[RMDB]
RNA sequence: GGGAACGACUCGAGUAGAGUCGAAAAGCGCGCAGUAAACGGUGACGGUACUCUCGCGUACAGUUUCGUUGAUGCACUUCAAGCAAGCCAUCCAGGAUACUUUGUACGCUGGCUGGGCGGUUGCCUCCCUUAACGCUGGGUUCGCCCAGCGUUAAGGAAAAGAAACAACAACAACAAC
Reactivity to DMS in 0.01 (KOAc 150mM, MgCl2 10mM, bicine 150mM(pH8.5), 24C), signal-to-noise 3, nucleotides 027 to 126: g000c110g040c070g010c070a050g010u010a100a040a040c060g000g000u020g020a050c030g010g010u010a020c030u000c120u000c270g010c180g000u000a020c020a040g040u010u000u010c010g030u010u020g020a140u000g000c070a090c030u000u000c160a090a130g010c110a040a070g020c270c030a040u000c000c050a080g000g010a050u000a030c030u010u000u010g000u000a010c080g000c020u000g000g020c080u000g020g010g010c010g000g000u010u010g010c040c070u000c110
Reactivity to 2A3 in 0.01 (KOAc 150mM, MgCl2 10mM, bicine 150mM(pH8.5), 24C), signal-to-noise 1, nucleotides 027 to 126: g070c090g020c010g010c040a000g040u140a050a080a020c050g070g030u160g010a060c050g050g010u050a040c010u000c030u060c210g040c070g010u000a010c000a000g000u000u040u080c170g070u080u090g030a020u060g030c060a020c080u070u040c110a000a120g070c040a050a020g000c010c010a020u000c020c030a030g000g010a010u020a070c070u120u250u220g030u010a000c050g000c100u010g050g000c000u020g000g000g030c030g040g050u020u050g010c000c020u020c060

The record gives the reactivity of an RNA of 177 nucleotides to DMS and 2A3. High DMS reactivity at an A or C suggests that its Watson-Crick edge is free. The 2A3 profile rests on 1,368 reads. The reactions ran in a buffer of 150 mM KOAc, 10 mM MgCl2 and 150 mM bicine (pH 8.5), at 24 C. Source: RMDB library OK2TRN, as collected in RNAgym.